[RMDB]
RNA sequence: GGGAACGACUCGAGUAGAGUCGAAAAGAAGAGAAGCGCGCGAAUUGGAAACCAGCGAACCGUAUUACGCGCGCAAGGAACCGGGCCUUGGUUCAUUGGAAAGAAUAGAUAAUCUCGCUGGUAAAGAGACUCAUUUACGAUUCGUCGUAAAUGAGUCAAAAGAAACAACAACAACAAC
Reactivity to DMS in 0.01 (KOAc 150mM, MgCl2 10mM, bicine 150mM(pH8.5), 24C), signal-to-noise 2, nucleotides 027 to 126: g000a060a130g000a260g050a130a210g020c000g000c000g040c000g000a050a050u010u030g020g010a210a220a080c000c000a000g000c000g000a070a200c050c050g010u050a010u030u000a140c000g000c010g010c000g000c010a030a020g000g010a080a010c010c010g000g000g000c070c000u000u040g010g050u000u000c030a180u020u030g010g030a030a060a120g000a030a120u060a020g000a020u040a100a130u010c150u010c050g000c000u000g000g000u000a060a040a060g000a160
Reactivity to 2A3 in 0.01 (KOAc 150mM, MgCl2 10mM, bicine 150mM(pH8.5), 24C), signal-to-noise 4, nucleotides 027 to 126: g090a060a020g080a010g050a130a050g000c000g000c000g000c000g000a040a040u040u010g050g030a120a080a120c000c000a000g000c020g000a080a070c020c000g030u060a030u070u150a070c000g000c000g000c000g010c010a000a000g060g000a020a010c020c010g040g180g120c030c030u110u130g030g000u010u010c040a030u110u110g060g070a180a130a000g040a030a150u100a080g110a080u130a120a050u100c020u000c080g000c000u000g000g000u020a000a030a030g110a000

Notes
This 177-nucleotide RNA was probed chemically with DMS and 2A3. The reactions ran in a buffer of 150 mM KOAc, 10 mM MgCl2 and 150 mM bicine (pH 8.5), at 24 C. Reactivities are given for positions 27 through 126. The DMS profile rests on 2,646 reads.